[RMDB]
RNA sequence: GGGAACGACUCGAGUAGAGUCGAAAAGAUAUGGAACCAUCAAGGACUUUUGACGAGCGUUGGUCGGAAACGACCAUACGCUCGAUAAGUCCGUGGUUCCUAAGUCAAACGGUGCUUCGGCACCGAACAAUGUUGUAAGGUUCGCCUUACAACAUUGAAAAGAAACAACAACAACAAC
Reactivity to 2A3 in 0.01 (KOAc 150mM, MgCl2 10mM, bicine 150mM(pH8.5), 24C), signal-to-noise 7, nucleotides 027 to 126: g020a010u070a030u180g000g000a010a000c020c010a030u140c230a300a300g010g000a010c020u090u160u290u300g300a220c100g000a010g010c000g000u010u020g010g000u000c020g000g030a060a070a030c000g000a000c000c000a000u030a000c000g000c010u000c000g000a000u000a010a000g000u000c000c000g000u000g000g000u000u000c000c000u000a100a020g050u020c060a060a050a140c030g000g000u010g000c010u090u100c280g190g000c000a010c000c000g000a030a010
Reactivity to DMS in 0.01 (KOAc 150mM, MgCl2 10mM, bicine 150mM(pH8.5), 24C), signal-to-noise 7, nucleotides 027 to 126: g010a040u000a300u000g000g010a010a000c000c000a020u010c280a200a140g020g000a010c000u000u000u010u010g020a240c160g010a010g020c000g020u000u000g000g010u000c000g010g000a090a060a180c010g010a010c000c000a000u010a000c000g030c000u000c000g000a030u000a010a010g010u000c000c000g010u000g010g000u000u000c000c000u000a010a070g010u000c030a130a090a260c040g010g010u000g000c000u000u010c240g030g010c000a000c000c010g000a050a110